[RMDB]
RNA sequence: GGGAACGACUCGAGUAGAGUCGAAAACAUUACGAAUUCAGUCGCAAAUUGUAGAAUUAGUUACUCUACGAUUUAGUGAGCGUUAGUAACGUUGUAAUAUAAUAUAGUCUUUGGAAGGAUUAUAUUGGAGCCGCGGACAAGUUCGCUUGUCCGCGAAGCUAUAACAACAGUUCGCUGUUGUUAUAGCAAAAGAAACAACAACAACAAC
Reactivity to 2A3 in 0.01 (KOAc 150mM, MgCl2 10mM, bicine 150mM(pH8.5), 24C), signal-to-noise 5, nucleotides 027 to 156: c030a040u110u170a030c040g050a110a160u160u140c080a060g080u030c020g000c010a000a000a010u000u000g010u000a020g020a040a030u090u040a070g080u080u130a050c030u010c000u000a000c000g010a000u010u000u110a080g000u020g030a060g050c020g040u060u100a040g030u050a050a040c050g000u000u020g020u030a110a100u080a080u020a150a000u010a010u000a010g000u000c010u080u090u140g150g040a110a090g010g000a010u010u000a010u000a010u010u020g020g050a070g100c080c020g000c010g000g000a000c000a010a000g010u040u080c100g020c140u000u000g000u000c000c000g000c000g000a000a000
Reactivity to DMS in 0.01 (KOAc 150mM, MgCl2 10mM, bicine 150mM(pH8.5), 24C), signal-to-noise 1, nucleotides 027 to 156: c050a080u020u010a050c010g000a050a080u000u000c030a110g070u010c030g000c000a030a010a010u000u000g010u000a020g030a050a050u000u000a260g010u000u010a060c050u010c000u010a010c030g020a020u010u010u000a090g010u000g010a030g000c120g010u000u000a050g020u010a020a010c040g000u000u000g010u000a110a200u020a110u000a030a030u000a030u000a010g020u000c000u000u000u010g010g020a200a300g000g000a020u000u000a030u000a000u010u000g030g010a230g000c120c000g040c000g000g010a010c000a010a020g030u000u000c300g020c020u000u000g000u000c000c010g040c000g010a000a030
Structure probing data (2A3 and DMS) for a 207-nucleotide construct. Reactivities are given for positions 27 through 156. 2A3 adducts were read by reverse transcription with SuperScript II with manganese. DMS adducts were read by reverse transcription with MarathonRT. Source: RMDB library M2RFPK, as collected in RNAgym. The RNA was probed in 150 mM KOAc, 10 mM MgCl2 and 150 mM bicine (pH 8.5) at 24 C.